[RMDB]
RNA sequence: GGGAACGACUCGAGUAGAGUCGAAAAACUAACGCAAUAGACGAACGCCUUAAUGCCAUUUAUGCAAGAUUUCAUUGAGUGGCUUGCAUAUUAAACUACGUCUCGUGUAUCAUGAAACAUACACACCGGUACCGUCCCCAUUCGUGGGGACGGUACCAAAAGAAACAACAACAACAAC
Reactivity to 2A3 in 0.01 (KOAc 150mM, MgCl2 10mM, bicine 150mM(pH8.5), 24C), signal-to-noise 2, nucleotides 027 to 126: a000c050u050a090a000c050g030c060a040a140u020a110g020a030c010g010a000a050c020g000c000c000u210u190a180a030u140g060c000c000a010u000u000u110a000u000g000c000a000a000g010a010u050u220u150c060a110u000u250g090a010g190u070g120g000c000u000u010g000c000a000u000a000u060u230a020a030a010c060u160a150c050g010u000c050u040c140g000u000g000u020a000u000c090a190u240g260a020a000a010c060a000u040a000c000a060c050a070c040c040